This 177-nucleotide RNA was probed chemically with 2A3. 2A3 is a SHAPE reagent: it acylates the 2'-hydroxyl of flexible nucleotides of all four kinds. Reactivities are rounded to 0.1 and cut off at 0 and 3. For 2A3, 326 sequencing reads were counted. For 2A3 the reverse transcriptase was SuperScript II with manganese.

RNA sequence: GGGAACGACUCGAGUAGAGUCGAAAAAAAUCUUAGUGAAACACUGGAUUUCUUAUCUCAUGUCUGCUUUUCGUGAAAAAAUACCAAUUGAAGUGGAGGGUUUCUUCAAACAACAAGGGGCUGGGUCUCCUCAGUGAUGCUUCGGCAUCACUGAGGAAAAAGAAACAACAACAACAAC
Reactivity to 2A3 in 0.01 (KOAc 150mM, MgCl2 10mM, bicine 150mM(pH8.5), 24C), signal-to-noise 1, nucleotides 027 to 126: a000a000a000u010c020u110u230a030g000u020g050a110a230a000c050a000c120u000g000g000a000u110u000u000c060u000u050a030u040c000u000c080a140u220g060u020c030u000g080c140u000u020u010u020c000g030u110g110a000a000a000a000a000a130u120a200c060c090a130a200u140u230g110a180a030g000u170g030g300a250g220g000g000u000u130u100c040u100u040c090a270a300a300c150a070a000c000a010a010g000g000g140g000c000u060g000g120g020u000c020